This 207-nucleotide RNA was probed chemically with 2A3 and DMS. Values cover nucleotides 27 to 156. For 2A3 the reverse transcriptase was SuperScript II with manganese. Values are in units of 0.01, from 0 to 300, in steps of 10. DMS adducts were read by reverse transcription with MarathonRT.
RNA sequence: GGGAACGACUCGAGUAGAGUCGAAAAUUGAAAUUGAACCGUCCUGUUAUCGAAAGAUAUGCAGAAGAUACGAAAUGUGUGACAGCAUGGGAAGUAAAGGCAGACCGUGGUUCCCUUGAGUAUCUUAAUUAGGGGGACGAGUUCGCUCGUCCCCCAACUCUAACUCACAGUUCGCUGUGAGUUAGAGAAAAGAAACAACAACAACAAC
Reactivity to 2A3 in 0.01 (KOAc 150mM, MgCl2 10mM, bicine 150mM(pH8.5), 24C), signal-to-noise 2, nucleotides 027 to 156: u090u110g070a010a060a060u050u090g030a050a000c030c010g050u090c000c010u010g020u060u050a010u020c020g000a020a060a030g000a020u020a000u090g030c010a000g000a110a030g010a000u010a020c010g040a050a100a050u040g050u050g030u070g070a010c010a000g060c020a020u030g000g000g040a040a030g040u090a120a060a030g050g040c090a020g060a070c030c030g050u030g030g040u030u060c000c000c000u000u010g010a030g000u010a060u000c040u030u050a040a180u170u200a150g000g000g010g030g000a000c000g010a000g010u030u130c170g000c120u000c000g020u000c000c000c000c000c000a000a000
Reactivity to DMS in 0.01 (KOAc 150mM, MgCl2 10mM, bicine 150mM(pH8.5), 24C), signal-to-noise 2, nucleotides 027 to 156: u000u000g010a090a110a110u010u000g030a090a110c040c060g000u000c050c000u010g030u000u010a050u000c000g000a210a120a180g020a060u000a000u010g030c060a050g000a060a050g000a050u010a040c010g000a080a070a080u010g000u000g000u000g010a160c100a150g030c110a040u000g010g000g040a080a080g000u000a050a080a080g000g000c050a090g000a100c020c050g020u000g000g000u000u000c020c000c010u010u000g000a170g010u000a040u010c030u000u000a050a080u000u000a160g020g020g010g050g070a000c040g040a030g010u000u010c160g000c000u000c000g020u000c000c050c000c000c000a010a000